[RMDB]
RNA sequence: GGGAACGACUCGAGUAGAGUCGAAAAGCUUUCUGGUGGCCAAAAAGGGUGCAAACCUGAAAAUUGCUGUUGAGCUAGAGAAACUGACAACAAAGACUGGUUGUGCAGAAAAUGCACUUCAGGCUUAUACUCGACAUACCUUCGGGUAUGUCGAGUAAAAAGAAACAACAACAACAAC
Reactivity to DMS in 0.01 (KOAc 150mM, MgCl2 10mM, bicine 150mM(pH8.5), 24C), signal-to-noise 1, nucleotides 027 to 126: g000c070u000u010u000c000u000g030g010u010g000g040c020c130a040a060a140a170a130g020g000g000u000g000c210a050a100a010c010c060u000g000a050a020a070a120u000u000g020c030u000g010u020u000g000a170g010c040u000a070g010a070g010a040a050a060c070u000g020a050c110a030a050c050a100a010a020g010a020c030u000g000g010u000u000g010u000g020c000a030g010a130a090a040a170u000g000c010a000c010u000u000c030a060g000g000c010u000u010a060